Chemical mapping of a 207-nucleotide RNA with 2A3 and DMS. For 2A3 the reverse transcriptase was SuperScript II with manganese.

RNA sequence: GGGAACGACUCGAGUAGAGUCGAAAAGACUCCAUGGAACAUAUUCAGCUUUGAAAUCCAGUAAGGGUCUGUGAGUGGCCCUGGCCAGUGGAGUGUAGUGGACAAGGGGCACCUGAGCUUGGGUGGUUAGCACCUGAACUCUGGACUUACAGCCUUAUCCAUAAAAUAGUUUCGACUAUUUUAUGGAAAAAGAAACAACAACAACAAC
Reactivity to 2A3 in 0.01 (KOAc 150mM, MgCl2 10mM, bicine 150mM(pH8.5), 24C), signal-to-noise 2, nucleotides 027 to 156: g050a010c020u000c030c010a030u040g000g030a130a050c030a030u160a080u130u160c050a110g050c080u120u130u180g090a120a090a030u030c040c010a020g040u070a020a030g020g010g050u030c000u040g060u070g010a070g030u090g030g010c000c000c000u010g010g000c020c040a110g030u050g050g050a070g030u080g020u090a100g050u050g030g030a020c060a130a090g010g000g010g000c000a040c030c000u010g000a000g010c020u000u010g000g000g000u020g040g090u240u160a080g120c010a000c000c000u010g000a000a000c000u010c020u020g030g000a010c000u060u050a060c060a010g010c000c000u020u020a070
Reactivity to DMS in 0.01 (KOAc 150mM, MgCl2 10mM, bicine 150mM(pH8.5), 24C), signal-to-noise 3, nucleotides 027 to 156: g020a060c010u000c010c020a090u000g000g000a060a140c060a120u010a100u000u000c050a090g020c150u000u000u010g010a070a110a300u000c030c020a110g010u010a120a090g010g010g010u000c000u000g030u000g010a100g010u000g000g010c030c010c010u000g010g030c010c020a160g040u010g020g020a060g040u000g020u000a100g020u000g010g000a060c040a090a070g000g010g020g000c020a220c030c010u000g000a020g010c010u000u000g000g010g030u010g010g010u010u000a160g020c000a020c010c000u000g010a010a020c010u000c020u000g020g000a260c070u000u010a060c030a090g010c000c010u000u000a110

About this RNA
It was measured as part of the RMDB library OK3TST.